[RMDB]
RNA sequence: GGGAACGACUCGAGUAGAGUCGAAAAGUCACUCAAUUCGUUGAGUGACAUACUGGGCGCGGAGUCGCGCAUGAAAGGGUCAAGACGCGCUCGAUAAAAUAACUAGUUGCCAGUUCGCUGGCAACAACUAUAUACAUUGCUUCGGCAAUGUAUAUAGAAAAGAAACAACAACAACAAC
Reactivity to DMS in 0.01 (KOAc 150mM, MgCl2 10mM, bicine 150mM(pH8.5), 24C), signal-to-noise 7, nucleotides 027 to 126: g010u000c000a010c010u000c000a010a030u010u010c220g010u000u000g000a010g010u000g010a000c000a030u010a020c090u000g010g010g010c010g030c010g020g010a100g000u010c240g010c070g010c040a050u010g010a070a140a130g000g000g010u000c060a090a120g010a150c010g010c010g010c000u010c000g000a090u010a050a070a070a080u010a050a110c160u010a090g010u000u000g000c000c000a010g010u000u010c190g010c000u000g000g000c000a000a000c000a060a160
Reactivity to 2A3 in 0.01 (KOAc 150mM, MgCl2 10mM, bicine 150mM(pH8.5), 24C), signal-to-noise 7, nucleotides 027 to 126: g000u000c000a000c000u000c000a010a040u080u060c180g050u100u010g000a000g010u010g000a000c000a000u020a010c000u040g010g010g000c010g000c010g030g040a070g090u090c030g000c030g040c140a040u120g140a070a110a030g140g000g000u070c060a050a050g070a060c010g000c010g000c010u000c010g010a080u130a150a150a030a040u170a060a020c090u060a060g000u010u000g010c000c000a000g010u050u070c180g040c090u000g000g000c000a000a000c000a000a000